Record summary
Structure probing data (2A3) for a 207-nucleotide construct. Values cover nucleotides 27 to 156. For 2A3, 547 sequencing reads were counted. Source: RMDB library M2RFPK, as collected in RNAgym. High 2A3 reactivity points to a flexible backbone, as in loops and unpaired stretches.
[RMDB]
RNA sequence: GGGAACGACUCGAGUAGAGUCGAAAAAUACUUCUCAGGAUGGCGCGUUGCAGUUCAACAAGAUCCAGGGACUGUACAGAAUUUUCCUAUACCUCGAGUCGGGUUUGGAAUCUAAGGUUGACUCGCUAAAACUUUACGUGGUUCGCCACGUAAAGAACCUCAUUACUUGCUUCGGCAAGUAAUGAGGAAAAGAAACAACAACAACAAC
Reactivity to 2A3 in 0.01 (KOAc 150mM, MgCl2 10mM, bicine 150mM(pH8.5), 24C), signal-to-noise 1, nucleotides 027 to 156: a000u170a020c000u000u020c010u030c010a050g030g050a050u050g080g060c010g030c030g080u080u030g000c020a000g050u010u060c050a090a150c060a090a060g020a120u000c010c030a020g050g010g070a000c050u050g020u030a080c010a070g160a170a140u000u000u040u070c000c010u040a050u080a050c010c020u030c040g000a040g020u010c070g020g060g000u050u040u070g060g010a020a000u000c080u010a090a090g120g000u020u110g050a060c000u000c030g080c050u080a000a000a060a060c000u010u000u020a000c000g000u010g000g010u000u010c050g030c070c000a000c030g000u000a000a000a000g000a000a000